[RMDB]
RNA sequence: GGGAACGACUCGAGUAGAGUCGAAAAUUGUGUCAUUUGUAUUCCAACAGCAAGUGGCACUAACUUUGGGGCAGUUGGAAUACCUCGAAGUGACUCAGUGCUCCUAAUCUAAGUACUGAGUGAACUUGUCAACUAAGAUUAGGAGUUGGCAAGUGUACCAUUAAAAUCAGUUCGCUGAUUUUAAUGGAAAAGAAACAACAACAACAAC
Reactivity to 2A3 in 0.01 (KOAc 150mM, MgCl2 10mM, bicine 150mM(pH8.5), 24C), signal-to-noise 9, nucleotides 027 to 156: u130u060g000u000g000u000c000a010u010u000u020g070u070a170u170u190c130c080a090a050c060a110g010c000a000a000g010u000g000g000c000a000c000u010a030a010c000u010u010u010g000g000g010g000c040a120g050u050u090g080g040a090a080u100a070c000c000u010c010g010a020a010g010u010g050a010c000u000c000a000g000u000g010c000u020c030c030u070a110a130u090c070u090a060a000g010u000a010c000u000g000a000g010u030g010a020a020c000u000u000g000u000c000a000a000c000u040a100a040g150a300u140u190a090g170g010a040g020u000u000g000g000c000a010a000g000u000g000u020a080
Reactivity to DMS in 0.01 (KOAc 150mM, MgCl2 10mM, bicine 150mM(pH8.5), 24C), signal-to-noise 4, nucleotides 027 to 156: u000u010g020u010g020u000c010a020u000u000u000g010u000a130u010u000c090c220a100a140c120a180g010c010a010a040g040u000g020g000c010a040c010u000a040a040c020u000u000u010g010g030g030g060c030a060g010u010u010g010g020a260a160u000a030c020c020u000c010g010a030a020g010u010g010a110c000u000c010a040g020u000g000c010u000c030c030u010a140a160u010c200u000a040a050g010u000a030c020u000g000a030g030u000g000a060a040c020u000u000g000u010c000a020a020c010u010a080a110g020a300u010u000a140g000g000a050g010u000u000g010g030c010a000a020g000u000g000u010a150